[RMDB]
RNA sequence: GGGAACGACUCGAGUAGAGUCGAAAACUGGCAGUCGGUAAACCUAUCGGCGCUGAAGGAUUCAAGUGGCUGAAGGUCCACGGUGCAAACUGCGCUGGUGUAGAUAAAGUCACCUUCGAGGAGCGCACUGCUGUAAGGCAUUCGUGCCUUACAGCAGAAAAGAAACAACAACAACAAC
Reactivity to DMS in 0.01 (KOAc 150mM, MgCl2 10mM, bicine 150mM(pH8.5), 24C), signal-to-noise 3, nucleotides 027 to 126: c030u020g000g020c080a050g050u080c000g000g000u000a070a060a120c100c000u020a110u000c040g000g030c000g020c000u000g000a090a040g000g020a050u000u010c050a160a100g060u000g020g000c000u020g050a100a140g000g030u020c010c060a050c000g000g020u000g010c020a080a150a120c160u000g000c000g030c010u010g000g030u010g050u020a110g010a100u010a020a080a120g010u010c030a060c020c060u000u010c070g020a230g000g020a020g060c120g040c050a200
Reactivity to 2A3 in 0.01 (KOAc 150mM, MgCl2 10mM, bicine 150mM(pH8.5), 24C), signal-to-noise 3, nucleotides 027 to 126: c020u010g040g000c010a070g030u060c020g040g010u110a110a060a110c020c010u010a070u080c000g010g000c020g000c000u030g050a070a080g110g060a080u190u120c100a120a060g030u010g100g000c020u040g070a050a000g080g020u000c020c000a050c020g000g000u000g000c030a040a160a170c150u100g000c000g000c030u080g120g000u010g030u060a070g020a150u150a100a080a000g070u020c000a040c030c010u000u060c110g090a210g030g080a060g000c000g020c030a010